Structure probing data (DMS and 2A3) for a 207-nucleotide construct.
[RMDB]
RNA sequence: GGGAACGACUCGAGUAGAGUCGAAAAUGAGGCUGGCUGGCUGCACUUGAGAUCAGAUCCUCCAGCUUUGGUAUCAGACCAUGCCCGUGCUUUGCUGAUGACACUGCUGUCUCUUGGGAUGCAGUUCUGAACUAAGUACUGCAUUCCACACUCCACACUAGUGAUGGUGAUUCGUCACCAUCACUAGAAAAGAAACAACAACAACAAC
Reactivity to DMS in 0.01 (KOAc 150mM, MgCl2 10mM, bicine 150mM(pH8.5), 24C), signal-to-noise 2, nucleotides 027 to 156: u020g010a100g010g030c010u010g020g090c080u010g030g000c040u010g040c070a110c060u000u000g000a080g010a100u000c050a150g010a120u010c080c000u010c030c030a070g010c040u000u010u000g040g010u000a130u000c050a160g040a120c030c020a080u010g010c010c010c070g030u000g020c040u000u000u000g030c080u010g000a170u010g020a080c050a110c070u000g010c040u000g000u010c000u030c050u000u000g000g000g000a020u000g000c010a030g030u000u000c020u010g000a160a160c230u000a130a080g040u010a060c010u010g000c010a040u000u000c010c000a030c040a050c030u000c040c040a090c100a150
Reactivity to 2A3 in 0.01 (KOAc 150mM, MgCl2 10mM, bicine 150mM(pH8.5), 24C), signal-to-noise 4, nucleotides 027 to 156: u130g000a000g020g030c030u010g000g000c040u010g000g030c030u020g040c070a070c080u100u190g070a080g030a170u130c040a050g060a150u110c020c010u020c020c020a010g020c050u070u020u010g030g000u070a060u130c060a040g100a150c020c010a020u090g010c010c010c040g040u040g020c020u070u090u090g010c030u020g040a080u060g010a040c020a030c080u080g010c040u040g020u030c010u000c020u070u020g000g010g000a000u000g000c010a000g000u010u020c010u020g120a200a140c070u060a160a000g000u000a010c000u000g000c000a000u000u000c000c000a000c000a000c000u050c010c000a030c010a020
The RNA was probed in 150 mM KOAc, 10 mM MgCl2 and 150 mM bicine (pH 8.5) at 24 C.